RNA sequence: GGGAACGACUCGAGUAGAGUCGAAAAUUUGCUGCUGGAGUGGCCAGACCCUGGGAAGCGGGCUGGAGAGAGGAGAGAAGCCAUCGAGCCACAUGGACCCCUACAGCCCGGAAUCUGAGCUGUGGUAUCGGGGAUACAAAUUCGUUUGUAUCCCCGAAAAAGAAACAACAACAACAAC
Reactivity to DMS in 0.01 (KOAc 150mM, MgCl2 10mM, bicine 150mM(pH8.5), 24C), signal-to-noise 1, nucleotides 027 to 126: u000u020u010g000c030u000g010c070u020g010g010a090g060u000g000g000c020c030a050g000a120c040c010c050u000g030g010g010a100a090g050c060g010g000g030c020u000g000g010a110g000a090g000a110g020g000a160g000a130g030a140a120g030c000c000a060u020c100g000a180g010c040c050a050c100a100u000g020g000a140c070c000c030c000u000a010c000a010g000c010c030c010g000g010a100a060u000c050u010g000a100g000c030u000g000u010g000g000u000a140